[RMDB]
RNA sequence: GGGAACGACUCGAGUAGAGUCGAAAAAAGAGGAAUCGUAGUGUGCGUGUUAAGUGUAGCACUAUAGUAGGUGGCAUGUUGCGUUAUUACGAUGUGAUGGCUAACGGUGGCACCGGUUUUUGUAACAAGUAACACGUGUGUUCGCACACGUGUUACUAAAAGAAACAACAACAACAAC
Reactivity to DMS in 0.01 (KOAc 150mM, MgCl2 10mM, bicine 150mM(pH8.5), 24C), signal-to-noise 2, nucleotides 027 to 126: a070a040g000a070g000g000a050a040u000c070g010u000a020g000u000g000u010g000c040g000u000g010u020u000a090a140g000u000g000u000a160g040c000a020c020u020a050u000a070g020u000a090g010g000u000g010g000c010a010u000g010u000u000g020c100g010u000u000a040u000u010a020c060g020a090u040g030u000g020a010u000g000g030c010u000a080a020c010g010g010u000g000g000c020a040c010c020g020g020u010u000u000u010u000g010u000a040a090c220a120
Reactivity to 2A3 in 0.01 (KOAc 150mM, MgCl2 10mM, bicine 150mM(pH8.5), 24C), signal-to-noise 2, nucleotides 027 to 126: a000a060g170a020g010g140a060a050u070c040g000u030a050g010u020g010u020g040c040g020u060g060u150u220a100a090g000u020g020u070a050g040c030a000c010u050a050u040a030g130u010a040g080g000u030g010g030c010a050u070g030u060u030g060c080g010u020u040a050u030u050a030c090g100a140u180g000u040g020a030u070g020g000c000u010a080a000c020g090g020u000g040g000c000a020c000c000g000g000u010u060u010u060u070g050u010a060a020c050a070

Structure probing data (DMS and 2A3) for a 177-nucleotide construct.
2A3 adducts were read by reverse transcription with SuperScript II with manganese.
It was measured as part of the RMDB library OK2TST.